Annotation: Structure probing data (DMS and 2A3) for a 177-nucleotide construct. For DMS, 2,095 sequencing reads were counted. High 2A3 reactivity points to a flexible backbone, as in loops and unpaired stretches. It was measured as part of the RMDB library 15KREP.

RNA sequence: GGGAACGACUCGAGUAGAGUCGAAAAGUCCCGUGGUCUCACUUCCAAAAGGAGGAGCGGGGGGACUUGGAACACGAGGGGACCAGUCCAGUCCGUGGGAACUACCCCGGAACUCCCGCUCUCCACAUCUAUACACUACGUUCGCGUAGUGUAUAGAAAAAGAAACAACAACAACAAC
Reactivity to DMS in 0.01 (KOAc 150mM, MgCl2 10mM, bicine 150mM(pH8.5), 24C), signal-to-noise 3, nucleotides 027 to 126: g010u000c000c000c000g050u010g020g020u000c000u010c030a140c170u010u010c080c110a100a090a120a160g010g010a030g020g010a010g020c010g000g000g000g000g000g010a050c070u000u000g000g010a050a110c100a070c190g010a110g030g010g010g020a080c000c010a050g000u010c010c000a120g000u010c000c020g010u010g020g010g000a130a160c300u010a210c020c000c010c000g010g010a030a170c090u000c000c010c000g010c000u000c000u000c000c010a070c250a060
Reactivity to 2A3 in 0.01 (KOAc 150mM, MgCl2 10mM, bicine 150mM(pH8.5), 24C), signal-to-noise 3, nucleotides 027 to 126: g090u020c040c000c010g040u050g000g000u030c040u030c050a130c110u190u110c060c040a070a100a120a130g020g020a030g010g060a030g010c000g000g000g000g000g000g020a020c000u030u120g050g010a120a030c090a040c120g070a160g050g020g000g000a000c000c000a000g000u000c000c010a000g040u000c000c020g000u240g000g010g020a160a200c090u230a150c040c010c010c000g000g010a020a020c020u020c020c000c010g000c000u010c000u000c000c010a010c000a010